RNA sequence: GGGAACGACUCGAGUAGAGUCGAAAAAUCGACGUCCUUGCGAAUGACAUCUUGAUGGCAAACCUCGCAUCCUCUGGUGUGGUUGCUGUGGCCUCUUCGGAGGAGGAGCCGGUGGAGAAGAGAAUGGCAUCACUAAAGCGUUCGCGCUUUAGUGAUGAAAAGAAACAACAACAACAAC
Reactivity to 2A3 in 0.01 (KOAc 150mM, MgCl2 10mM, bicine 150mM(pH8.5), 24C), signal-to-noise 2, nucleotides 027 to 126: a000u040c020g050a030c030g060u020c000c000u030u080g000c020g040a160a040u100g030a040c010a080u040c040u110u180g070a090u080g090g000c010a070a050a080c030c020u000c060g000c010a040u040c000c030u020c030u050g030g040u060g010u050g030g090u050u070g020c100u080g070u160g110g020c010c000u040c000u050u070c030g060g040a030g000g010a020g010g020a000g000c000c000g000g020u040g030g020a050g020a080a000g050a020g070a030a060u100g080g010
Reactivity to DMS in 0.01 (KOAc 150mM, MgCl2 10mM, bicine 150mM(pH8.5), 24C), signal-to-noise 3, nucleotides 027 to 126: a110u010c050g010a080c050g000u010c030c040u000u010g010c030g000a080a080u000g000a060c050a050u010c030u010u000g010a070u000g000g030c060a060a080a090c080c030u000c060g020c100a160u000c030c040u010c030u020g010g010u010g000u000g000g010u000u000g010c070u000g020u000g000g000c030c010u000c020u000u000c110g010g020a060g010g010a050g000g010a110g020c050c080g030g000u000g010g000a090g010a110a120g000a100g000a070a090u010g000g020